[RMDB]
Notes
Chemical mapping of a 207-nucleotide RNA with 2A3 and DMS. Conditions: 150 mM KOAc, 10 mM MgCl2 and 150 mM bicine (pH 8.5), 24 C. Reactivities are given for positions 27 through 156. 2A3 adducts were read by reverse transcription with SuperScript II with manganese.
RNA sequence: GGGAACGACUCGAGUAGAGUCGAAAAUAGGACGCAUAGAAACACAAUACGGGCAAUGGUCGCUAUAGUAUAGCAUCACGGUCUUCCUACCGCCGAAUCCUUCGGUUUUAGGGGUUGUUGUGCAAUUGGCACAUUUGCAACCAAACACCCCCGCGCCGAAUCCCUAAACUUUCGAGUUUAGGGAUUCAAAAGAAACAACAACAACAAC
Reactivity to 2A3 in 0.01 (KOAc 150mM, MgCl2 10mM, bicine 150mM(pH8.5), 24C), signal-to-noise 2, nucleotides 027 to 156: u210a020g010g040a040c030g040c090a020u060a170g110a050a160a010c080a010c050a130a120u180a150c120g000g000g030c020a060a040u040g050g010u060c090g010c020u020a010u070a120g180u110a050u040a070g030c010a010u040c040a020c040g000g010u000c010u050u040c000c010u040a060c010c010g010c000c000g090a110a120u210c040c070u110u060c020g050g000u020u040u030u140a050g000g010g000g010u040u020g010u010u030g020u010g000c030a080a140u130u080g130g020c040a040c020a060u080u070u100g000c010a020a060c010c000a030a050a010c010a030c000c000c000c000c000g030c010g000c030c040
Reactivity to DMS in 0.01 (KOAc 150mM, MgCl2 10mM, bicine 150mM(pH8.5), 24C), signal-to-noise 1, nucleotides 027 to 156: u010a090g010g040a040c060g060c000a110u000a120g010a080a000a050c020a130c040a080a180u000a160c120g000g010g000c000a060a060u000g050g040u000c060g060c010u000a050u000a070g040u000a300u030a090g000c040a050u010c000a000c000g000g040u010c030u010u010c030c010u010a050c070c000g000c000c010g030a080a190u000c020c000u020u010c020g030g000u000u000u000u010a060g010g010g020g000u000u000g010u010u010g030u030g030c020a070a080u010u000g010g070c060a000c030a180u000u000u000g030c080a100a070c040c000a010a050a100c060a190c010c010c020c000c030g000c040g080c060c080